The record gives the reactivity of an RNA of 177 nucleotides to DMS and 2A3.
[RMDB]
RNA sequence: GGGAACGACUCGAGUAGAGUCGAAAAAGUUCCCUUGGCUUUGACCCUGUGCUAGAGCAUUGCCUGCUCUUCUCCUCUGCAUUAAAAGGAAUAUUUAUCCUUUUAAAUGUAUUCAGAAAGCCAGCACUUCACAGUGCUACUUCGGUAGCACUGUGAAAAAAGAAACAACAACAACAAC
Reactivity to DMS in 0.01 (KOAc 150mM, MgCl2 10mM, bicine 150mM(pH8.5), 24C), signal-to-noise 2, nucleotides 027 to 126: a070g000u000u000c010c010c020u020u010g000g000c010u010u000u000g000a120c110c140c060u000g020u000g010c150u010a090g050a090g000c010a040u020u000g010c210c190u000g010c000u000c000u000u010c060u020c020c030u020c170u000g000c000a020u000u000a000a000a000a020g020g010a030a240u020a140u060u010u040a090u020c000c000u000u000u000u000a010a060a000u000g030u000a020u020u000c130a150g030a060a040a030g030c000c000a060g030c190a140c230
Reactivity to 2A3 in 0.01 (KOAc 150mM, MgCl2 10mM, bicine 150mM(pH8.5), 24C), signal-to-noise 4, nucleotides 027 to 126: a000g010u000u010c000c000c000u000u020g010g000c020u050u030u070g100a190c030c000c060u060g020u060g020c080u040a010g000a000g030c000a050u040u210g100c020c030u030g000c010u000c000u020u020c000u010c010c010u040c010u030g000c000a000u000u000a000a000a000a000g020g010a060a010u060a250u160u240u140a120u080c000c000u020u000u000u020a020a070a020u010g000u000a060u090u090c030a050g090a110a010a010g010c020c010a030g030c050a080c030

The RNA was probed in 150 mM KOAc, 10 mM MgCl2 and 150 mM bicine (pH 8.5) at 24 C. For 2A3 the reverse transcriptase was SuperScript II with manganese.